[RMDB]
RNA sequence: GGGAACGACUCGAGUAGAGUCGAAAAACUUAUUACGAUAUGAUUCAGAUGGUGUCUUACUGGUUCGUACCAAGGGACAUAAUGGUUUCUUGUUUCCAACCAAAGAACAAGUGGCGAGCCUGAAUAAAAAACUGACUGCCGUUCGCGGCAGUCAGAACAUUCAAAGUCCGUUCGCGGACUUUGAAUGAAAAGAAACAACAACAACAAC
Reactivity to 2A3 in 0.01 (KOAc 150mM, MgCl2 10mM, bicine 150mM(pH8.5), 24C), signal-to-noise 1, nucleotides 027 to 156: a000c050u070u140a060u170u090a260c110g000a010u040a010u300g080a080u170u100c050a140g040a220u100g000g040u060g070u050c020u030u160a200c080u010g010g010u000u090c080g010u120a050c000c000a010a010g000g000g000a000c020a060u260a180a170u110g100g000u000u000u000c000u000u010g010u000u040u000c000c020a060a050c020c030a130a140a000g010a000a000c020a060a120g040u010g120g030c040g000a020g000c000c000u020g110a020a040u160a040a090a040a000a000a000c000u000g000a000c000u000g000c030c050g000u080u070c240g000c000g110g000c000a000g000u000c000a000g000a000a000
The record gives the reactivity of an RNA of 207 nucleotides to 2A3. The reactions ran in a buffer of 150 mM KOAc, 10 mM MgCl2 and 150 mM bicine (pH 8.5), at 24 C.